[RMDB]
RNA sequence: GGGAACGACUCGAGUAGAGUCGAAAACAAAUCAGCUUAUGCCGUUUAGGUAUGUUACAUGUGUGAUUAUGUGAGGUGAAGUAUGUUUUAGCUGGUUCAUGGUUGUUAUACGGCUUUUUUUACCUCCCCUAGUGACUCUUUUCGAAGAGUCACUAGGAAAAGAAACAACAACAACAAC
Reactivity to 2A3 in 0.01 (KOAc 150mM, MgCl2 10mM, bicine 150mM(pH8.5), 24C), signal-to-noise 2, nucleotides 027 to 126: c030a000a020a000u010c010a010g010c010u090u200a010u080g010c000c000g170u160u200u210a040g000g000u060a030u060g060u050u120a110c090a070u110g070u020g060u110g040a070u130u220a130u110g100u130g030a000g050g050u030g030a010a000g100u120a030u210g080u010u010u050u150a000g000c030u030g110g000u080u050c070a070u160g180g030u120u110g020u120u080a090u040a200c060g090g000c000u140u100u060u010u020u020u030a040c030c000u010c010c000
Reactivity to DMS in 0.01 (KOAc 150mM, MgCl2 10mM, bicine 150mM(pH8.5), 24C), signal-to-noise 3, nucleotides 027 to 126: c040a070a060a040u010c020a080g010c000u000u010a050u000g010c010c010g020u000u010u010a090g020g030u000a030u000g010u000u010a070c090a050u000g010u000g010u000g000a100u010u010a090u010g010u010g020a020g010g020u000g010a040a100g020u010a020u000g010u010u000u010u000a040g010c010u000g010g010u000u000c090a060u010g000g010u000u000g000u000u000a110u010a100c110g010g000c010u000u000u000u000u000u000u000a040c020c010u010c020c100